[RMDB]
RNA sequence: GGGAACGACUCGAGUAGAGUCGAAAACAGUCACAGUCUGUGACAGUCUCACAGACACUCUCAGUCUGUCAGAGUGAGUCUGAGAGUCACACUGACACUGUGUGAGACACUCUGUCAGACACAGUCAAUUGAUCUAUGGUUUCGACCAUAGAUCAAUAAAAGAAACAACAACAACAAC
Reactivity to 2A3 in 0.01 (KOAc 150mM, MgCl2 10mM, bicine 150mM(pH8.5), 24C), signal-to-noise 9, nucleotides 027 to 126: c030a010g130u140c060a040c020a150g020u010c010u020g010u010g020a010c020a040g180u050c010u000c050a010c000a000g010a000c010a040c040u040c000u010c030a020g000u000c000u020g020u020c000a010g010a010g030u040g030a040g070u020c050u120g130a090g010a020g220u020c000a000c000a010c020u090g200a070c040a050c270u060g010u010g000u010g030a020g010a000c010a010c020u010c000u010g010u010c010a000g020a010c010a000c010a050g110u090c040a040
Reactivity to DMS in 0.01 (KOAc 150mM, MgCl2 10mM, bicine 150mM(pH8.5), 24C), signal-to-noise 9, nucleotides 027 to 126: c100a080g020u000c060a120c220a130g010u000c020u000g010u000g000a020c100a150g010u010c120u000c010a020c020a020g000a020c020a120c150u000c030u010c060a130g010u000c010u010g000u000c030a020g000a030g010u000g000a130g010u000c050u000g000a090g000a090g010u000c010a010c040a030c030u000g010a130c170a130c280u000g010u000g010u010g010a080g010a180c010a040c040u010c030u000g010u000c020a020g010a040c020a060c210a050g010u010c150a100